[RMDB]
RNA sequence: GGGAACGACUCGAGUAGAGUCGAAAAAUAAACCGCGUAGGGAACCAAGCCUUGAGUUCUGGAGACCCACGGUACAAGGCUUGGUUCAAGACAUGUGGGUCUCCAGUCCCACUCCCUACGCCAAAAACACUUGCAUAGUGUUCGCACUAUGCAAGUGAAAAGAAACAACAACAACAAC
Reactivity to DMS in 0.01 (KOAc 150mM, MgCl2 10mM, bicine 150mM(pH8.5), 24C), signal-to-noise 2, nucleotides 027 to 126: a040u000a010a100a090c180c090g010c040g000u010a000g010g000g000a120a050c110c090a080a040g010c050c030u000u030g000a060g010u020u010c010u000g000g010a050g010a030c010c000c010a030c070g030g010u000a060c150a060a130g000g010c020u000u010g000g000u000u000c070a010a100g000a030c100a030u020g010u000g000g000g000u000c000u000c000c010a050g040u010c010c000c000a140c140u000c020c010c010u000a020c010g030c000c150a020a070a030a060a060
Reactivity to 2A3 in 0.01 (KOAc 150mM, MgCl2 10mM, bicine 150mM(pH8.5), 24C), signal-to-noise 1, nucleotides 027 to 126: a000u040a000a040a080c040c050g000c000g010u000a020g070g000g010a020a000c030c030a100a030g050c010c050u170u170g090a090g130u080u090c030u000g020g000a000g000a010c000c000c040a020c030g060g050u100a120c010a060a050g040g020c020u070u130g060g010u040u010c000a000a000g020a010c060a100u270g010u030g000g000g000u010c010u010c000c000a000g000u000c000c000c000a060c030u010c010c000c010u000a000c010g040c000c000a030a040a010a010a010